[RMDB]
RNA sequence: GGGAACGACUCGAGUAGAGUCGAAAAGAGUCCUUGGAAAAGUUCACAUGUACUGUUGAUGUGGCUAAUUUCUUGAGGGCAUAUUCAUGGUCUGACGUCUUAAAAGGGAAAAGGCUAAUUGGUGCCAAAUUCCGUCUCAGUUCGCUGAGACGGAAUUAAAAGAAACAACAACAACAAC
Reactivity to 2A3 in 0.01 (KOAc 150mM, MgCl2 10mM, bicine 150mM(pH8.5), 24C), signal-to-noise 1, nucleotides 027 to 126: g150a030g030u000c000c000u010u000g070g000a000a000a070a000g010u300u300c000a000c000a010u070g200u300a110c080u130g170u300u300g060a030u000g000u000g030g010c020u040a150a280u010u040u010c020u150u190g020a020g000g030g000c010a000u030a040u150u070c070a030u110g000g020u000c030u010g060a020c020g110u030c030u050u190a190a120a080a030g100g020g050a050a080a000a000g000g000c010u000a060a090u120u120g070g010u070g020c000c040a030
Reactivity to DMS in 0.01 (KOAc 150mM, MgCl2 10mM, bicine 150mM(pH8.5), 24C), signal-to-noise 2, nucleotides 027 to 126: g000a090g000u000c050c020u000u000g000g000a040a030a140a040g010u000u040c000a010c040a010u010g040u050a040c100u010g040u040u090g000a030u000g020u000g000g010c050u040a120a130u000u000u000c000u010u000g030a080g040g010g010c000a080u020a090u000u050c130a130u010g010g070u000c000u000g000a230c070g000u030c040u000u020a090a040a120a100g010g000g020a020a030a210a050g020g040c000u000a010a120u010u010g000g000u030g000c030c040a060
Structure probing data (2A3 and DMS) for a 177-nucleotide construct. The reactions ran in a buffer of 150 mM KOAc, 10 mM MgCl2 and 150 mM bicine (pH 8.5), at 24 C. For 2A3, 1,446 sequencing reads were counted. Reactivities are given for positions 27 through 126.